Source information
This 177-nucleotide RNA was probed chemically with 2A3 and DMS. Source: RMDB library OK1LIB, as collected in RNAgym. For 2A3, 15,434 sequencing reads were counted. The reactions ran in a buffer of 150 mM KOAc, 10 mM MgCl2 and 150 mM bicine (pH 8.5), at 24 C. For 2A3 the reverse transcriptase was SuperScript II with manganese.

[RMDB]
RNA sequence: GGGAACGACUCGAGUAGAGUCGAAAAGUCCUAGCGAAAAGCUAGGACAAGUGCAUCUAAAAUGUCAUCGCGAGCCUGAAGAUGACAAGAUGCACAAGGCUCGCAAGUCGAGGAGAACUCGACAAAAAUAGUACUACGUGUUCGCACGUAGUACUAUAAAAGAAACAACAACAACAAC
Reactivity to 2A3 in 0.01 (KOAc 150mM, MgCl2 10mM, bicine 150mM(pH8.5), 24C), signal-to-noise 9, nucleotides 027 to 126: g000u000c000c000u000a010g010c020g060a200a160a100a010g000c000u000a000g000g000a000c000a000a010g000u000g000c000a000u000c010u100a090a090a130a130u120g010u010c000a000u010c020g030c070g110a110g130c020c120u190g100a110a040g000a010u010g000a000c000a000a000g000a000u000g000c000a000c000a000a010g010g000c000u000c010g040c090a100a040g110u020c000g000a000g010g010a050g010a030a040c000u010c010g030a040c100a030a090a010a020
Reactivity to DMS in 0.01 (KOAc 150mM, MgCl2 10mM, bicine 150mM(pH8.5), 24C), signal-to-noise 4, nucleotides 027 to 126: g000u000c000c000u030a000g030c000g000a070a080a110a180g010c000u000a010g020g000a000c010a000a030g030u000g000c020a000u040c010u010a090a070a110a250u070g010u000c000a010u000c020g060c070g000a170g010c140c110u020g020a080a120g000a020u000g000a010c020a040a030g000a000u000g000c000a000c020a100a090g010g010c000u010c010g020c170a070a300g000u000c000g020a000g010g000a210g020a030a240c010u000c010g000a070c070a010a040a060a120